[RMDB]
RNA sequence: GGGAACGACUCGAGUAGAGUCGAAAAGCUAUCAUGCAAACUAGGAUUGUCUGCUCAUGCACAGAACCAACUACCGAUAACUAACAGUGCAUGAAGGUUAGUUAUUCCAUAUUAAUUGCACCGAGGCUCAUAGCGCAGAUUUCGAUCUGCGCUAUGAAAAAGAAACAACAACAACAAC
Reactivity to DMS in 0.01 (KOAc 150mM, MgCl2 10mM, bicine 150mM(pH8.5), 24C), signal-to-noise 3, nucleotides 027 to 126: g020c060u000a020u010c010a190u020g020c010a050a080a070c150u010a080g000g010a090u020u010g010u020c040u020g040c030u000c010a000u000g020c030a100c000a040g020a100a150c140c070a090a090c080u060a090c140c080g000a070u020a020a020c050u030a020a020c050a050g000u010g000c000a010u000g020a020a060g000g020u010u010a020g050u010u000a000u000u010c060c080a100u030a040u010u020a050a100u010u000g020c000a030c070c110g010a080g000g000c060
Reactivity to 2A3 in 0.01 (KOAc 150mM, MgCl2 10mM, bicine 150mM(pH8.5), 24C), signal-to-noise 6, nucleotides 027 to 126: g000c020u050a060u240c000a040u080g000c020a040a040a040c060u100a060g020g040a140u090u100g050u070c020u050g020c010u010c010a020u030g010c030a000c010a020g070a090a070c060c040a030a040c030u140a160c050c090g050a070u040a110a030c030u030a030a010c030a060g000u020g060c000a010u030g040a040a030g080g020u080u050a000g010u020u010a030u080u000c000c000a020u030a050u180u230a120a120u070u030g010c010a010c020c080g010a010g040g000c000